RNA sequence: GGGAACGACUCGAGUAGAGUCGAAAAGGCAAGACGCUGACACUGACCCAGUUCCUGCACAGCUUGCAUGUCAGCCAGAUUCGGCAGCUGAACAGCCGCGUCACAGCCAAAACUUACCAGCCUCCAGUCACACUUAGGCUUUCGAGCCUAAGUGUGAAAAAGAAACAACAACAACAAC
Reactivity to DMS in 0.01 (KOAc 150mM, MgCl2 10mM, bicine 150mM(pH8.5), 24C), signal-to-noise 2, nucleotides 027 to 126: g000g000c010a140a090g000a080c150g000c000u000g000a100c080a090c110u000g020a180c000c050c010a150g050u000u000c010c010u000g000c090a100c110a120g020c070u000u030g000c050a100u000g000u000c050a040g030c000c070a100g010a130u010u000c050g030g020c020a060g000c000u000g000a120a120c090a110g000c020c030g000c070g010u020c020a100c060a170g000c020c050a000a060a060a130c090u010u010a060c060c030a200g020c020c000u000c090c060a140g030
Reactivity to 2A3 in 0.01 (KOAc 150mM, MgCl2 10mM, bicine 150mM(pH8.5), 24C), signal-to-noise 1, nucleotides 027 to 126: g000g000c040a010a120g000a000c060g000c050u050g010a020c000a020c060u050g090a050c000c040c010a030g040u100u030c000c040u030g000c050a040c010a080g030c010u070u100g000c050a030u170g080u150c040a010g000c050c000a100g050a150u080u070c020g040g000c000a000g030c040u130g050a060a060c040a010g060c010c040g030c000g050u040c020a040c020a000g000c000c000a060a110a020a050c080u130u100a050c030c010a030g060c010c000u000c000c000a000g070